[RMDB]
RNA sequence: GGGAACGACUCGAGUAGAGUCGAAAAACCUGGGGGUGACAUACACCGGAAAACCGUAGAGAUACGGUCCCCCUUGUAGUCGGUGUACAGGUGGUGCAUGGCUGUCGUCAGCUAGUGUCGUGCGCUGAGUUUUAUUGUAAUUCGUUACAAUAAAACUAAAAGAAACAACAACAACAAC
Reactivity to DMS in 0.01 (KOAc 150mM, MgCl2 10mM, bicine 150mM(pH8.5), 24C), signal-to-noise 7, nucleotides 027 to 126: a040c010c000u010g000g020g010g010g020u010g010a100c110a160u000a040c020a010c020c020g000g000a050a040a070a020c010c010g010u000a010g000a240g000a250u010a000c000g000g000u010c010c020c000c010c020u030u030g010u020a060g010u020c020g000g000u010g000u000a040c160a110g000g010u010g010g020u000g000c030a030u010g010g010c020u000g000u010c130g010u020c080a070g000c030u030a050g010u010g010u010c030g010u000g000c020g000c010u000g000
Reactivity to 2A3 in 0.01 (KOAc 150mM, MgCl2 10mM, bicine 150mM(pH8.5), 24C), signal-to-noise 8, nucleotides 027 to 126: a010c000c000u000g000g000g000g000g000u060g020a000c010a030u070a010c010a010c000c000g020g000a040a060a000a010c000c000g000u000a010g000a010g010a090u010a020c000g010g040u120c010c000c000c000c000u030u190g150u070a060g040u040c010g010g000u010g000u010a040c030a020g020g090u080g010g000u010g040c010a010u040g030g000c010u040g050u180c040g060u070c030a020g010c040u060a050g060u000g010u070c010g020u020g000c010g000c010u030g010